Structure probing data (DMS and 2A3) for a 177-nucleotide construct.
[RMDB]
RNA sequence: GGGAACGACUCGAGUAGAGUCGAAAAGAUAUGGAGUGGUCAGUGGCAAGACCUGUUCAGGAUCGGAAACGAUCCCAGGUUGAUGACCCACUGAGCCACUCCUAAGUCAAAGCUCUCUUCGGAGAGCCUUUUAUAGAAGCUUCGGCUUCUAUAAAAGAAAAGAAACAACAACAACAAC
Reactivity to DMS in 0.01 (KOAc 150mM, MgCl2 10mM, bicine 150mM(pH8.5), 24C), signal-to-noise 5, nucleotides 027 to 126: g010a050u000a300u000g010g010a020g030u000g000g010u000c000a020g010u000g010g020c050a110a080g010a010c000c000u000g000u010u020c300a150g010g020a000u000c000g000g000a120a130a280c000g020a010u000c000c000c010a010g000g010u010u010g000a070u000g000a130c300c010c000a010c000u000g000a100g000c000c000a000c000u000c000c000u000a010a070g010u010c030a140a110a150g010c000u000c000u000c000u000u010c190g040g000a010g000a010g020c000
Reactivity to 2A3 in 0.01 (KOAc 150mM, MgCl2 10mM, bicine 150mM(pH8.5), 24C), signal-to-noise 2, nucleotides 027 to 126: g040a000u060a020u240g010g000a010g000u000g010g000u040c010a020g000u020g010g010c010a200a080g020a010c000c010u020g020u110u300c160a050g010g000a010u000c010g010g040a070a060a060c010g000a000u000c000c000c000a010g030g010u040u020g070a300u100g060a080c000c000c000a000c000u020g010a040g020c000c000a000c010u020c000c000u000a020a000g000u040c020a090a000a130g000c010u000c020u000c000u100u110c300g100g010a000g000a000g000c010
It was measured as part of the RMDB library TTRDES.
For 2A3 the reverse transcriptase was SuperScript II with manganese.
Values cover nucleotides 27 to 126.
The reactions ran in a buffer of 150 mM KOAc, 10 mM MgCl2 and 150 mM bicine (pH 8.5), at 24 C.
The DMS profile rests on 5,911 reads.
Reactivities are rounded to 0.1 and cut off at 0 and 3.
DMS adducts were read by reverse transcription with MarathonRT.